[RMDB]
Structure probing data (DMS and 2A3) for a 177-nucleotide construct. High DMS reactivity at an A or C suggests that its Watson-Crick edge is free. It was measured as part of the RMDB library RFMREP.
RNA sequence: GGGAACGACUCGAGUAGAGUCGAAAACUGCAGACUCCAGCGCCAUUUUCAGAGCUAUAAGUGUGAAGUGAUGAUAGCUCUUUCAAUGGUACUGCAGUAAGCAUAUUGUGUAGUCUUCGGACUACACCAAUUGUUAUCCGUUCGCGGAUAACAAUUGAAAAGAAACAACAACAACAAC
Reactivity to DMS in 0.01 (KOAc 150mM, MgCl2 10mM, bicine 150mM(pH8.5), 24C), signal-to-noise 7, nucleotides 027 to 126: c080u000g020c010a040g020a070c020u000c160c010a020g010c050g020c000c000a000u000u000u000u000c080a020g010a010g000c000u000a010u000a070a140g020u010g020u010g010a160a160g020u010g010a130u000g000a040u000a010g000c000u000c000u000u000u000c060a010a010u000g000g020u000a050c000u000g010c220a020g010u000a020a050g010c030a070u010a100u010u000g010u000g000u000a000g000u000c000u000u000c220g010g000a020c000u000a000c000a000c010
Reactivity to 2A3 in 0.01 (KOAc 150mM, MgCl2 10mM, bicine 150mM(pH8.5), 24C), signal-to-noise 7, nucleotides 027 to 126: c010u010g000c000a010g040a130c060u040c070c020a050g030c020g000c070c000a010u010u000u020u030c020a000g000a000g000c010u020a020u050a160a170g090u110g110u120g300a180a130g130u140g180a110u130g020a020u030a000g000c000u000c000u000u010u000c010a000a000u000g010g000u030a020c000u000g000c000a000g000u020a010a030g020c020a040u120a090u300u170g010u000g000u000a000g000u000c000u010u030c220g070g000a000c010u000a000c000a000c010